Conditions: 150 mM KOAc, 10 mM MgCl2 and 150 mM bicine (pH 8.5), 24 C. The record gives the reactivity of an RNA of 177 nucleotides to DMS and 2A3. For DMS the reverse transcriptase was MarathonRT. For 2A3, 706 sequencing reads were counted.
[RMDB]
RNA sequence: GGGAACGACUCGAGUAGAGUCGAAAAAACGCAAGCUAUGGUCGACAAGUUUAUCAAAUAUCCGCACCAGUUGACUAAGACGGAGUUAGAUGCAGUAGUGCUAUAUUGUUCGCAAAUAAUUAUGCUGGUCUUCUCAAAGCUUCGGCUUUGAGAAGACAAAAGAAACAACAACAACAAC
Reactivity to DMS in 0.01 (KOAc 150mM, MgCl2 10mM, bicine 150mM(pH8.5), 24C), signal-to-noise 1, nucleotides 027 to 126: a040a090c160g000c080a020a040g020c000u000a110u010g000g030u020c010g000a070c030a210a090g080u000u020u000a020u050c180a090a050a030u060a130u040c030c020g020c030a030c060c070a100g000u010u000g000a090c090u030a000a020g020a130c010g000g000a050g000u000u000a000g020a190u000g000c000a000g100u030a000g000u040g000c080u000a060u000a230u000u020g000u000u000c120g020c050a060a050a050u000a040a090u100u000a210u050g000c110u000g010
Reactivity to 2A3 in 0.01 (KOAc 150mM, MgCl2 10mM, bicine 150mM(pH8.5), 24C), signal-to-noise 2, nucleotides 027 to 126: a000a000c070g010c050a000a000g050c000u140a040u110g000g000u000c000g050a070c070a110a080g020u090u130u120a090u110c020a010a180a000u160a110u010c000c020g040c040a080c010c030a020g000u070u020g050a090c000u070a000a080g040a000c010g000g090a020g000u050u000a080g000a070u050g010c020a000g130u110a000g040u060g070c000u020a000u000a020u200u010g060u030u000c000g020c030a020a140a190u220a050a070u130u120a020u060g030c020u010g060